The record gives the reactivity of an RNA of 207 nucleotides to 2A3. It was measured as part of the RMDB library OK3TST.
RNA sequence: GGGAACGACUCGAGUAGAGUCGAAAAUCCGGCGAGGAGGUCCCCGUGCUCGGUGACGACUGUGAGGUGCGGGUCGAAGUGUCCGAAGCCGUCACCGCGGGCGAGGAACUGCUGCCGGACGGCCUCGGCACCUUCGAGAGUGUCGCAACGUCCGCCGGACGGGCGUAAAGUUCGCUUUACGCCCGUCAAAAGAAACAACAACAACAAC
Reactivity to 2A3 in 0.01 (KOAc 150mM, MgCl2 10mM, bicine 150mM(pH8.5), 24C), signal-to-noise 1, nucleotides 027 to 156: u010c040c000g020g010c040g170a010g050g050a020g060g000u020c010c000c010c010g070u070g070c030u040c010g040g000u010g000a010c030g070a060c040u000g150u150g160a130g100g000u120g060c050g010g160g120u090c220g130a130a060g000u000g060u120c030c000g000a010a000g010c010c020g000u020c000a030c040c000g010c020g020g010g050c020g000a010g000g100a080a020c030u080g040c020u010g000c080c000g020g000a000c000g010g000c000c050u010c000g000g020c000a000c030c080u130u230c080g100a100g000a040g070u000g000u020c000g000c020a040a040c050g050u020c000c040g000c040c030g010